Structure probing data (DMS and 2A3) for a 177-nucleotide construct.
For DMS the reverse transcriptase was MarathonRT.
For 2A3, 5,455 sequencing reads were counted.
Source: RMDB library M2PK90, as collected in RNAgym.
The RNA was probed in 150 mM KOAc, 10 mM MgCl2 and 150 mM bicine (pH 8.5) at 24 C.

RNA sequence: GGGAACGACUCGAGUAGAGUCGAAAAUGAAAUAGCGUAAUGGACAUUGAGAAUGUACGCUAAGUGUGUGUUGUAUGGGUAAGGUCCAAUUGAACACACACACAGUUGGACCUAAUGUCGAAAAAAACAGUAUUAUAGCGUUCGCGCUAUAAUACUGAAAAGAAACAACAACAACAAC
Reactivity to DMS in 0.01 (KOAc 150mM, MgCl2 10mM, bicine 150mM(pH8.5), 24C), signal-to-noise 4, nucleotides 027 to 126: u010g000a090a090a100u000a010g030c000g010u000a020a040u000g010g010a070c030a060u000u000g020a120g010a110a080u010g000u000a020c000g010c000u000a020a120g020u000g010u010g010u000g030u000u000g020u000a090u010g010g010g020u000a060a070g020g010u000c010c010a020a040u000u010g000a060a050c060a020c060a040c090a030c060a040c050a030g010u000u000g000g000a050c010c000u000a020a030u000g000u000c040g010a010a000a060a040a060a040a140
Reactivity to 2A3 in 0.01 (KOAc 150mM, MgCl2 10mM, bicine 150mM(pH8.5), 24C), signal-to-noise 3, nucleotides 027 to 126: u210g020a040a010a050u060a000g010c010g000u020a070a020u100g110g040a040c080a080u090u180g040a070g030a220a090u200g020u040a000c010g010c010u010a070a050g040u040g000u020g010u010g010u050u040g080u060a240u130g060g040g020u080a060a050g040g000u000c010c000a010a010u030u050g130a160a000c020a000c000a000c010a000c000a010c000a120g060u080u060g030g010a000c000c000u010a010a070u090g050u080c010g060a060a000a000a000a010a040a020